About this RNA:
Conditions: 150 mM KOAc, 10 mM MgCl2 and 150 mM bicine (pH 8.5), 24 C. An RNA of 177 nucleotides, treated with 2A3 and DMS and read out base by base. DMS adducts were read by reverse transcription with MarathonRT. Values cover nucleotides 27 to 126.

[RMDB]
RNA sequence: GGGAACGACUCGAGUAGAGUCGAAAAGUUGGAAGAGGAGGACGACGAUCUUCUAAGAGACACUUUAGUGCCUGAUUAUCUCAGAGAAGAGAAGAAAGUGGUGGUGGAAGAAGAUGAAGAGAAGAGGCAAUACGCCAUCGUUCGCGAUGGCGUAUUGAAAAGAAACAACAACAACAAC
Reactivity to 2A3 in 0.01 (KOAc 150mM, MgCl2 10mM, bicine 150mM(pH8.5), 24C), signal-to-noise 2, nucleotides 027 to 126: g080u060u100g000g070a070a040g040a050g060g010a010g030g000a010c010g020a010c020g060a120u040c010u030u000c030u030a100a050g060a000g030a050c010a020c030u120u140u160a080g030u060g090c000c030u080g040a060u000u200a120u090c050u000c040a030g040a030g010a190a030g010a010g020a100a000g030a020a060a010g060u050g010g010u020g000g030u030g000g020a040a000g020a030a000g040a060u120g000a060a070g040a020g010a110a000g000a040g020g060
Reactivity to DMS in 0.01 (KOAc 150mM, MgCl2 10mM, bicine 150mM(pH8.5), 24C), signal-to-noise 3, nucleotides 027 to 126: g010u010u000g010g010a070a070g010a090g010g010a070g000g000a080c060g030a100c130g010a150u000c010u010u000c020u000a140a140g000a050g010a070c060a040c080u000u010u010a110g020u010g000c030c020u000g020a110u010u010a120u000c080u000c040a090g000a120g000a080a040g000a060g010a080a080g000a050a050a080g020u000g000g020u000g010g030u000g000g000a060a050g010a040a060g010a090u010g040a050a060g000a080g000a040a070g000a090g000g000